[RMDB]
RNA sequence: GGGAACGACUCGAGUAGAGUCGAAAACGCAGUGGGCGCUCGGCUCUCAGGAGCCGAGCUCAUGGACGGGUGAGGCGGCCGUGUGCGCAGACAGUGCUCCAGCCGCGCGCGCGCCCCAGGCCCCGGCGGAUGAGAGAGUGUUCGCACUCUCUCAUCCAAAAGAAACAACAACAACAAC
Reactivity to DMS in 0.01 (KOAc 150mM, MgCl2 10mM, bicine 150mM(pH8.5), 24C), signal-to-noise 1, nucleotides 027 to 126: c020g000c120a160g000u010g000g020g010c040g000c070u050c000g000g050c020u030c000u000c070a150g040g020a030g020c000c000g010a000g000c030u000c030a020u000g020g000a270c020g000g000g090u010g000a250g010g000c050g020g000c040c010g030u030g020u010g020c040g000c000a060g000a030c280a100g030u050g000c000u020c020c020a160g000c100c010g010c000g000c030g000c030g020c110g010c000c030c030c040a110g020g000c020c000c080c000g000g060c090
Reactivity to 2A3 in 0.01 (KOAc 150mM, MgCl2 10mM, bicine 150mM(pH8.5), 24C), signal-to-noise 2, nucleotides 027 to 126: c050g000c020a070g020u050g020g030g040c070g010c110u000c010g030g000c000u050c020u030c070a180g250g010a000g010c000c000g000a010g000c000u000c010a000u020g010g020a010c010g050g030g030u040g010a060g010g040c070g000g050c050c000g050u090g000u030g030c000g020c010a000g050a180c050a070g110u060g130c040u010c040c010a040g000c020c000g000c000g000c000g000c000g030c030g000c010c020c020c000a020g050g000c000c000c000c000g050g030c070